[RMDB]
RNA sequence: GGGAACGACUCGAGUAGAGUCGAAAAGAAGGCUGGUCAUCCGUUCGGACCAGAAAGGCAGUCACACACGAAACCUGAGGAAACAGGAAGCCACAACAAAAGCCAUGUGAUUAGCGAACGGAAAGAAAUUACCAGGUGCGUUCGCGCACCUGGUAAUAAAAGAAACAACAACAACAAC
Reactivity to 2A3 in 0.01 (KOAc 150mM, MgCl2 10mM, bicine 150mM(pH8.5), 24C), signal-to-noise 2, nucleotides 027 to 126: g220a010a000g100g020c000u010g010g020u000c020a130u120c000c000g000u000u000c000g010g000a000c000c000a020g000a070a010a020g010g010c000a010g000u060c000a000c000a000c000a000c110g060a090a120a030c000c000u060g020a110g110g290a210a140a000c000a010g000g050a000a010g010c010c000a030c030a100a100c020a000a190a010a000g000c010c000a090u160g090u100g070a150u080u170a070g070c010g000a000a000c020g030g040a000a000a000g040a000a160
Reactivity to DMS in 0.01 (KOAc 150mM, MgCl2 10mM, bicine 150mM(pH8.5), 24C), signal-to-noise 1, nucleotides 027 to 126: g000a190a040g000g000c030u000g000g000u030c000a130u020c090c000g040u000u000c000g000g000a020c000c000a010g000a020a130a160g000g050c000a050g070u000c020a150c020a010c110a100c070g000a060a020a150c100c040u000g010a180g000g000a040a070a100c020a000g010g040a110a120g000c050c010a040c040a090a100c240a000a040a000a090g040c050c010a080u000g010u000g000a010u000u060a110g020c040g000a030a000c000g000g000a180a100a000g000a020a190
An RNA of 177 nucleotides, treated with 2A3 and DMS and read out base by base.
For DMS, 1,265 sequencing reads were counted.
Conditions: 150 mM KOAc, 10 mM MgCl2 and 150 mM bicine (pH 8.5), 24 C.